[RMDB]
The record gives the reactivity of an RNA of 177 nucleotides to DMS and 2A3.
RNA sequence: GGGAACGACUCGAGUAGAGUCGAAAACGCAGUCACGACCGCCUCGUAAGACGUAGCCGGUUCCAAGUCGAGCAGCUGGAACAUCUGCACGUGCUCAGUGCCAUCUUUCUUGUCUGUGGCCGGAAUGGUGUCACGUGAGAUUCGUCUCACGUGACACAAAAGAAACAACAACAACAAC
Reactivity to DMS in 0.01 (KOAc 150mM, MgCl2 10mM, bicine 150mM(pH8.5), 24C), signal-to-noise 1, nucleotides 027 to 126: c130g000c090a040g000u010c020a070c110g000a000c000c050g000c060c000u040c040g080u010a050a020g000a150c070g040u010a100g000c130c300g060g020u000u020c020c000a030a040g000u000c060g010a170g020c290a010g030c010u010g000g000a130a040c070a070u020c110u080g010c040a070c050g010u000g010c010u070c070a080g000u030g030c090c010a000u020c010u010u000u020c020u050u000g000u010c000u000g000u000g000g020c000c060g060g030a110a100u000g000
Reactivity to 2A3 in 0.01 (KOAc 150mM, MgCl2 10mM, bicine 150mM(pH8.5), 24C), signal-to-noise 3, nucleotides 027 to 126: c040g000c000a010g040u040c000a000c090g030a060c000c040g040c010c020u050c010g080u100a070a110g070a050c030g030u060a040g010c000c030g020g000u030u050c000c000a110a030g070u110c050g040a050g040c040a010g030c050u000g000g030a050a020c010a100u060c020u090g030c030a030c090g040u060g020c040u030c070a060g020u020g060c020c000a020u040c040u010u110u000c010u060u100g070u040c030u040g110u040g050g000c030c010g050g000a090a050u160g110